[RMDB]
RNA sequence: GGGAACGACUCGAGUAGAGUCGAAAAGAAAGAAAGAAAUUAGCUUGCCAGUUAGCGAGGUCUGUCCCCACACGACAGAUAAUCGGGUGCAACUCCCGCCCCUUUUCCGAGGGUCAUCGGAACCAAAAAAACUCAGGCAACUUCGGUUGCCUGAGAACCUAUCAACUUACUUCGGUAAGUUGAUAGGAAAAGAAACAACAACAACAAC
Reactivity to 2A3 in 0.01 (KOAc 150mM, MgCl2 10mM, bicine 150mM(pH8.5), 24C), signal-to-noise 2, nucleotides 027 to 156: g020a020a040a010g050a020a100a020g090a040a100a100u120u060a070g030c020u020u010g060c040c030a190g060u110u100a020g020c020g020a030g010g060u000c000u010g010u040c020c000c110c020a010c000a020c030g010a000c000a010g030a020u060a040a100u180c020g000g010g000u020g010c000a010a000c010u020c000c010c010g000c010c000c000c000u120u170u030u010c000c000g000a000g000g000g020u030c040a000u000c000g000g000a000a020c040c020a070a100a010a010a010a020a040c000u000c010a000g000g000c000a000a010c010u050u040c160g080g010u000u000g000c000c000u000g010a000g000a000a000
Annotation:
An RNA of 207 nucleotides, treated with 2A3 and read out base by base. The data come from the RNA Mapping Database (RMDB), library M2RFPK. The reactions ran in a buffer of 150 mM KOAc, 10 mM MgCl2 and 150 mM bicine (pH 8.5), at 24 C.